RNA sequence: GGGAACGACUCGAGUAGAGUCGAAAACGGAUGAACUGCUGUUCGCCCACAACAACAGCAGUGUGCGCGUGGCCACGUCCAUGCGGUCCGGCACCAUCCACCGCCUGCACGUCUCCGAGUUCGGGAAGCACAGGUGAGAAUUCGUUCUCACCUGUGCAAAAGAAACAACAACAACAAC
Reactivity to DMS in 0.01 (KOAc 150mM, MgCl2 10mM, bicine 150mM(pH8.5), 24C), signal-to-noise 2, nucleotides 027 to 126: c070g000g010a040u010g020a220a050c000u000g000c020u000g000u000u000c220g020c010c020c150a100c200a090a090c080a010a020c000a030g010c010a010g010u000g000u000g020c010g020c040g070u000g000g000c050c170a120c240g010u010c040c020a030u000g010c010g020g020u010c030c020g000g000c090a100c060c030a030u010c050c050a050c060c010g010c010c010u010g040c080a100c120g010u000c020u000c020c000g010a080g000u000u000c010g000g000g010a130a100
Reactivity to 2A3 in 0.01 (KOAc 150mM, MgCl2 10mM, bicine 150mM(pH8.5), 24C), signal-to-noise 2, nucleotides 027 to 126: c040g010g020a010u050g130a070a030c000u000g010c010u020g010u070u070c110g050c070c030c010a080c040a000a160c020a010a000c000a000g000c010a000g020u010g000u050g030c050g020c000g050u090g000g010c060c140a180c140g050u000c050c000a050u090g030c010g000g000u010c010c000g010g000c020a040c050c000a040u040c030c000a010c010c030g050c000c000u020g000c050a030c060g030u000c020u000c050c020g020a030g090u040u090c040g020g040g050a060a030
Conditions: 150 mM KOAc, 10 mM MgCl2 and 150 mM bicine (pH 8.5), 24 C. The record gives the reactivity of an RNA of 177 nucleotides to DMS and 2A3. For 2A3 the reverse transcriptase was SuperScript II with manganese. The data come from the RNA Mapping Database (RMDB), library OK2TST. Reactivities are given for positions 27 through 126.